Conditions: 150 mM KOAc, 10 mM MgCl2 and 150 mM bicine (pH 8.5), 24 C.
Chemical mapping of a 177-nucleotide RNA with DMS and 2A3.
DMS adducts were read by reverse transcription with MarathonRT.
2A3 adducts were read by reverse transcription with SuperScript II with manganese.
2A3 is a SHAPE reagent: it acylates the 2'-hydroxyl of flexible nucleotides of all four kinds.

[RMDB]
RNA sequence: GGGAACGACUCGAGUAGAGUCGAAAAAGCGGCCCUUUCGAGGGCCGCUGAUGGUAAGCCAGCCGAAAGGCAUUUUAUUCCUUGGCUGGCGAAAGCCUAAAAUUCACGCUGCUUUCGAGCAGCGUAACAAUAAGGCUUGGUUCGCCAAGCCUUAUUGAAAAGAAACAACAACAACAAC
Reactivity to DMS in 0.01 (KOAc 150mM, MgCl2 10mM, bicine 150mM(pH8.5), 24C), signal-to-noise 5, nucleotides 027 to 126: a020g010c010g010g020c000c000c000u000u000u010c150g020a020g010g010g020c000c000g010c000u000g000a040u010g000g000u000a120a300g000c000c000a010g020c010c010g010a100a040a030g010g010c300a050u010u010u010u000a130u020u000c000c010u000u000g010g010c000u000g000g000c010g000a010a060a090g000c000c000u000a050a050a090a110u010u000c120a020c000g010c010u000g000c000u000u000u010c150g000a030g010c010a010g010c000g000u000a010a060
Reactivity to 2A3 in 0.01 (KOAc 150mM, MgCl2 10mM, bicine 150mM(pH8.5), 24C), signal-to-noise 2, nucleotides 027 to 126: a000g030c000g000g000c010c000c030u020u040u050c170g050a000g000g000g030c030c000g020c000u000g010a000u020g000g030u050a030a000g000c010c000a000g020c000c000g140a210a030a010g000g000c000a000u080u110u040u160a140u140u070c000c000u000u020g010g000c000u010g000g000c000g000a020a010a010g010c000c000u030a060a060a020a040u200u170c050a010c000g000c010u010g000c000u100u070u170c260g060a000g000c000a000g000c000g000u010a000a010
Source: RMDB library M2PK50, as collected in RNAgym.